[RMDB]
RNA sequence: GGGAACGACUCGAGUAGAGUCGAAAAGAUAUGGAUUAGGACAUGAAUUAAGGGUCGGAAACGACCUGAUGAUUCAACAGCCUACGGUCCUAAGUCGCGACUUUCCUGGCUUCGGCCAGGAAAGUAACUACCUAAAGGGGUUCGCCCCUUUAGGUAGAAAAGAAACAACAACAACAAC
Reactivity to DMS in 0.01 (KOAc 150mM, MgCl2 10mM, bicine 150mM(pH8.5), 24C), signal-to-noise 6, nucleotides 027 to 126: g010a120u000a190u020g000g020a060u010u010a050g010g010a040c020a270u000g000a020a010u000u010a140a300g000g000g010u000c000g010g000a080a090a190c010g010a010c000c000u000g010a050u010g000a010u000u000c010a050a090c220a140g000c020c010u010a060c300g010g000u000c000c000u010a030a050g010u010c030g000c250g000a050c000u000u000u000c000c000u000g000g020c000u000u010c270g010g000c000c000a000g000g000a000a000a000g010u000a020a150
Reactivity to 2A3 in 0.01 (KOAc 150mM, MgCl2 10mM, bicine 150mM(pH8.5), 24C), signal-to-noise 2, nucleotides 027 to 126: g060a010u140a080u270g050g020a010u040u030a010g010g000a020c090a140u130g000a010a000u030u020a020a060g010g000g030u020c020g010g000a120a050a040c000g010a000c000c030u020g000a010u150g010a010u020u010c030a060a030c040a040g060c010c000u070a080c150g020g050u000c000c000u010a110a060g120u040c050g020c040g150a040c020u000u010u030c000c010u020g000g010c020u040u040c260g120g000c010c000a000g020g000a000a010a000g000u000a000a000